[RMDB]
RNA sequence: GGGAACGACUCGAGUAGAGUCGAAAACGGCACGCGGCCGGGACACGCGGGAGGCGCUCCGCGAAAUCGACCAAGAUGCCAGCCCGAGAGCUACGGGCGACGCGGUUAAGGCAUGACCGGGCGCGUCUAGAGAGAGGAAUUUCGAUUCCUCUCUCUAAAAAGAAACAACAACAACAAC
Reactivity to DMS in 0.01 (KOAc 150mM, MgCl2 10mM, bicine 150mM(pH8.5), 24C), signal-to-noise 9, nucleotides 027 to 126: c120g010g020c180a030c010g010c070g010g020c010c000g010g010g010a120c160a120c020g010c000g000g010g010a110g020g010c080g010c060u000c010c010g000c010g010a040a070a100u000c070g000a150c040c050a060a270g000a080u000g000c010c030a240g000c000c000c010g000a140g000a140g010c170u010a100c020g000g000g010c010g010a060c100g010c030g010g000u000u000a070a140g010g000c030a090u010g010a210c030c010g010g000g010c010g010c010g010u000c050
Reactivity to 2A3 in 0.01 (KOAc 150mM, MgCl2 10mM, bicine 150mM(pH8.5), 24C), signal-to-noise 4, nucleotides 027 to 126: c020g060g030c090a000c020g010c010g050g110c020c000g000g020g010a060c050a010c080g010c010g000g040g030a090g090g120c040g000c080u030c020c000g000c000g020a080a030a020u120c040g080a100c030c010a030a030g050a060u050g010c010c000a010g000c000c000c000g030a060g010a010g050c120u190a060c040g010g020g030c020g010a030c050g000c020g090g000u090u110a070a030g000g020c040a040u070g040a030c000c000g010g010g070c010g000c010g010u000c020

Chemical mapping of a 177-nucleotide RNA with DMS and 2A3. The 2A3 profile rests on 9,101 reads. For DMS, 13,103 sequencing reads were counted. The RNA was probed in 150 mM KOAc, 10 mM MgCl2 and 150 mM bicine (pH 8.5) at 24 C. High DMS reactivity at an A or C suggests that its Watson-Crick edge is free.